[RMDB]
RNA sequence: GGGAACGACUCGAGUAGAGUCGAAAAGACAGAUGCAGAUAUUGGAGAAUCCACCACCCGGGAGCCAGCACCAGGGCAGCACCAGCCCCAUCCUUUGUCAGGCAGUCAAAGGCUCUUCUUCCUGUGAACCUAGGGUUGAUUUCGAUCAACCCUAGGUAAAAGAAACAACAACAACAAC
Reactivity to DMS in 0.01 (KOAc 150mM, MgCl2 10mM, bicine 150mM(pH8.5), 24C), signal-to-noise 2, nucleotides 027 to 126: g010a130c060a030g030a120u000g020c040a030g010a150u000a100u000u000g010g010a130g020a080a160u010c020c060a040c040c060a090c050c030c080g020g000g010a080g010c040c060a070g000c060a070c050c060a070g000g020g000c030a040g000c060a060c060c070a080g000c010c010c010c070a130u000c040c020u000u000u000g000u010c020a110g010g020c100a060g000u000c020a030a070a080g010g020c060u000c050u000u000c070u000u000c020c000u010g030u020g030a090